Structure probing data (2A3 and DMS) for a 177-nucleotide construct. For 2A3 the reverse transcriptase was SuperScript II with manganese.
RNA sequence: GGGAACGACUCGAGUAGAGUCGAAAAUGUGGUAGUGUUGGUUACACCAAGGAGGGUAGUGUGAUCAAUUUCUGUUACAUGCAUCAAAUGGAACUUGCUAAUGGUACACAUACCGGUUCAGCAUUUGCUAUGCUUAUAGGUUCGCCUAUAAGCAUAGAAAAGAAACAACAACAACAAC
Reactivity to 2A3 in 0.01 (KOAc 150mM, MgCl2 10mM, bicine 150mM(pH8.5), 24C), signal-to-noise 9, nucleotides 027 to 126: u030g000u010g010g010u010a010g010u020g010u030u010g010g000u010u020a010c010a010c020c030a060a060g150g030a050g030g080g020u090a040g000u010g000u000g020a010u010c000a010a010u120u230u040c010u000g010u000u010a010c010a010u030g040c010a110u070c030a050a040a030u070g050g010a020a020c010u040u060g020c020u100a110a040u070g020g030u120a050c140a000c010a120u060a040c010c010g040g030u030u030c030a060g020c010a050u010u000u040g020
Reactivity to DMS in 0.01 (KOAc 150mM, MgCl2 10mM, bicine 150mM(pH8.5), 24C), signal-to-noise 9, nucleotides 027 to 126: u000g020u000g000g010u000a010g030u000g010u000u000g010g010u000u000a020c030a030c010c060a100a150g010g010a090g010g010g020u010a100g010u000g010u000g000a010u000c020a020a020u000u010u000c010u000g010u000u000a030c020a020u000g000c160a120u000c060a020a050a050u000g000g010a040a030c040u000u000g020c110u000a060a060u010g010g000u010a070c220a100c170a080u000a060c090c060g010g000u000u000c060a090g000c040a040u000u000u000g010